The record gives the reactivity of an RNA of 207 nucleotides to DMS and 2A3. The RNA was probed in 150 mM KOAc, 10 mM MgCl2 and 150 mM bicine (pH 8.5) at 24 C. 2A3 adducts were read by reverse transcription with SuperScript II with manganese. The DMS profile rests on 3,521 reads.
[RMDB]
RNA sequence: GGGAACGACUCGAGUAGAGUCGAAAAGAGCAUGCCGAGGGGCGGUUGGCCUCGUUAAAAGCCGCAAAGUUAUAGUUGCAAACGACGAUAACUACGCUCUAGCCGCUUAAUGCCGCUAGCCAUCUACCACACGUUUCGCACAUGGGCAGUGGAUUUGCUUACAUGACUACUUCGGUAGUCAUGUAAGAAAAGAAACAACAACAACAAC
Reactivity to DMS in 0.01 (KOAc 150mM, MgCl2 10mM, bicine 150mM(pH8.5), 24C), signal-to-noise 2, nucleotides 027 to 156: g000a070g020c020a060u000g050c060c040g000a080g010g010g030g040c040g040g000u010u000g040g010c000c000u010c060g000u000u000a070a070a170a090g000c000c060g030c040a100a120a110g010u000u000a030u000a040g010u000u020g000c110a090a090a200c060g020a010c030g030a070u000a030a050c040u000a150c050g010c030u000c030u000a090g010c050c050g010c030u000u000a130a120u020g030c040c030g030c010u020a040g050c030c030a060u000c060u010a080c010c040a120c010a050c050g000u010u000u010c050g030c030a030c040a030u000g040g020g030c010a060g030u020g020g000a270u010u000u000g010
Reactivity to 2A3 in 0.01 (KOAc 150mM, MgCl2 10mM, bicine 150mM(pH8.5), 24C), signal-to-noise 4, nucleotides 027 to 156: g060a000g030c040a020u080g060c030c010g010a030g000g010g010g010c020g020g000u010u050g090g020c010c000u010c000g020u020u060a010a020a030a000g020c010c020g000c020a130a090a010g000u030u020a020u000a040g020u020u050g080c100a080a070a080c100g030a000c010g010a010u010a050a020c020u060a040c070g020c030u020c000u040a020g010c020c030g000c050u050u200a080a040u300g010c020c000g010c010u010a010g030c040c010a130u060c050u120a100c000c060a020c000a020c080g020u020u030u050c040g010c010a020c020a130u070g010g040g000c030a040g040u030g010g040a070u020u030u140g030
DMS adducts were read by reverse transcription with MarathonRT. The data come from the RNA Mapping Database (RMDB), library ARCHII.